[RMDB]
RNA sequence: GGGAACGACUCGAGUAGAGUCGAAAAGUGUGGAUUUUUUUUUUAAUGGAGUUUCACUCUAGGCUGGAGUGCAGUGGCGUGAUCUCUGCUUACUGCAGCCUCUGCCUCCCCAGUUCAAGCUUCAAGACACGUUAUCUUGAUUCGUCAAGAUAACGUGAAAAGAAACAACAACAACAAC
Reactivity to DMS in 0.01 (KOAc 150mM, MgCl2 10mM, bicine 150mM(pH8.5), 24C), signal-to-noise 3, nucleotides 027 to 126: g010u010g000u000g010g000a000u000u000u000u000u000u010u000u010u020u020a100a110u010g010g000a020g000u010u010u000c050a030c020u000c040u000a040g020g000c030u020g020g010a030g040u010g020c010a010g020u000g010g000c040g000u000g000a100u000c150u000c100u000g020c010u010u010a040c070u010g010c020a040g010c130c000u000c050u000g010c010c010u000c020c010c010c070a080g010u010u010c130a050a120g000c060u000u000c030a040a120g010a300
Reactivity to 2A3 in 0.01 (KOAc 150mM, MgCl2 10mM, bicine 150mM(pH8.5), 24C), signal-to-noise 2, nucleotides 027 to 126: g020u000g010u030g000g040a030u070u060u010u050u020u020u040u070u140u300a130a110u150g040g000a030g000u010u110u130c050a020c010u000c020u030a040g040g000c100u140g020g020a010g040u090g000c000a010g020u010g000g000c040g090u100g170a250u040c090u010c060u180g020c000u060u160a050c030u020g000c000a030g000c000c020u000c000u000g000c000c000u010c000c010c000c010a020g010u100u100c070a060a020g000c030u070u060c050a070a010g070a030